The record gives the reactivity of an RNA of 177 nucleotides to 2A3 and DMS. Values cover nucleotides 27 to 126. The 2A3 profile rests on 7,965 reads. Conditions: 150 mM KOAc, 10 mM MgCl2 and 150 mM bicine (pH 8.5), 24 C. For DMS, 13,009 sequencing reads were counted. High DMS reactivity at an A or C suggests that its Watson-Crick edge is free.
RNA sequence: GGGAACGACUCGAGUAGAGUCGAAAAGCCAUGCGCGCCUGCCCGUCUUCACCAGACCGCGUGUUGCCAUUCUUGCCACCGGCGAUGAACUCGUUCCGCCCGGAGCAAUACCGGGGCCGGACCAGAAGAUAAAUACCACUUUCGAGUGGUAUUUAUCAAAAGAAACAACAACAACAAC
Reactivity to 2A3 in 0.01 (KOAc 150mM, MgCl2 10mM, bicine 150mM(pH8.5), 24C), signal-to-noise 4, nucleotides 027 to 126: g000c000c000a050u120g030c030g000c010g010c030c010u030g030c000c010c000g050u030c010u120u080c040a070c070c000a040g060a110c000c010g030c010g030u050g040u060u060g000c010c000a080u100u060c050u070u110g030c010c010a070c040c040g010g020c010g050a070u130g060a040a060c030u040c090g040u080u010c010c010g020c000c000c020g000g010a030g020c010a020a050u090a150c010c010g000g000g040g020c080c010g000g020a010c000c010a050g040a160a010
Reactivity to DMS in 0.01 (KOAc 150mM, MgCl2 10mM, bicine 150mM(pH8.5), 24C), signal-to-noise 7, nucleotides 027 to 126: g000c020c020a090u010g010c060g020c070g010c040c020u000g010c030c030c030g010u000c040u010u010c080a070c100c050a070g000a080c060c050g000c070g020u000g020u000u000g000c030c070a120u010u000c050u000u000g000c050c050a090c030c010g000g000c020g010a070u000g000a090a130c110u000c070g000u000u000c000c020g010c020c000c010g000g010a080g000c230a080a120u010a050c010c000g000g010g000g020c070c020g000g000a130c120c070a090g000a100a120